[RMDB]
RNA sequence: GGGAACGACUCGAGUAGAGUCGAAAAGGCUUCACCUUCGGGUGAAGCCAAAUAAGCGAGAUCGCCGGAUAGCUGCCUAAGCGAGAUCGCCGGAUAGCUCCCAAAGGAUUCCGUUCGCGGAAUCCAAUCAUCUAUUUAUCUUCGGAUAAAUAGAUGAAAAAGAAACAACAACAACAAC
Reactivity to DMS in 0.01 (KOAc 150mM, MgCl2 10mM, bicine 150mM(pH8.5), 24C), signal-to-noise 5, nucleotides 027 to 126: g010g010c000u000u000c000a010c000c000u000u010c270g020g020g040u000g010a010a000g020c010c000a000a030a040u000a190a120g000c010g000a020g000a190u000c010g050c010c050g000g000a090u000a140g000c160u010g000c020c010u010a180a140g010c010g000a020g000a170u000c000g000c010c050g000g010a120u000a110g000c110u000c000c000c010a100a100a130g010g000a010u000u000c000c000g020u000u000c200g010c000g010g000a020a000u000c000c000a050a050
Reactivity to 2A3 in 0.01 (KOAc 150mM, MgCl2 10mM, bicine 150mM(pH8.5), 24C), signal-to-noise 3, nucleotides 027 to 126: g000g010c000u000u010c010a010c020c030u020u090c270g030g000g000u000g000a010a000g000c010c000a010a000a000u000a010a000g010c000g000a010g000a030u010c000g000c030c000g000g030a080u130a200g090c120u190g030c100c010u030a050a000g010c000g000a000g010a010u010c000g000c000c000g000g040a030u060a080g030c030u030c010c010c000a050a120a030g010g000a000u010u000c010c010g000u030u080c300g010c010g110g000a000a000u020c000c000a010a010
Structure probing data (DMS and 2A3) for a 177-nucleotide construct. Values cover nucleotides 27 to 126. The DMS profile rests on 6,036 reads. The reactions ran in a buffer of 150 mM KOAc, 10 mM MgCl2 and 150 mM bicine (pH 8.5), at 24 C.